[RMDB]
RNA sequence: GGGAACGACUCGAGUAGAGUCGAAAAGAAGGUGACGAUGCAGAAGACCACAUCAGGUCGAGGAAACACAAGAUGAUGUGACAUCGUGCAAACGAUCAGCUGAGAUCGACAGCAGAGUCACCGAAAAGGGUUACUUUCACUUCGGUGAAAGUAACCCAAAAGAAACAACAACAACAAC
Reactivity to 2A3 in 0.01 (KOAc 150mM, MgCl2 10mM, bicine 150mM(pH8.5), 24C), signal-to-noise 2, nucleotides 027 to 126: g140a000a000g000g000u000g000a000c000g010a030u000g020c000a010g020a280a040g010a050c020c030a000c000a080u120c040a080g000g030u000c000g040a020g000g170a160a240a000c090a000c010a100a000g020a030u110g000a010u010g260u000g090a120c000a050u000c000g000u000g030c040a100a070a060c020g040a060u000c010a070g070c070u130g110a100g000a300u020c030g000a010c000a000g010c000a000g040a000g010u000c040a000c000c000g000a000a000a000a000
Reactivity to DMS in 0.01 (KOAc 150mM, MgCl2 10mM, bicine 150mM(pH8.5), 24C), signal-to-noise 1, nucleotides 027 to 126: g000a040a230g020g080u000g000a010c000g030a160u000g000c100a020g000a110a200g000a000c000c000a090c040a040u000c130a000g000g000u040c000g000a100g000g020a200a090a060c130a170c010a090a110g050a080u000g000a010u000g020u000g000a230c140a000u080c000g000u100g000c160a000a140a040c080g000a000u000c000a070g000c070u040g000a100g000a060u000c000g000a130c190a000g000c020a070g020a300g060u000c000a000c000c000g070a000a110a040a160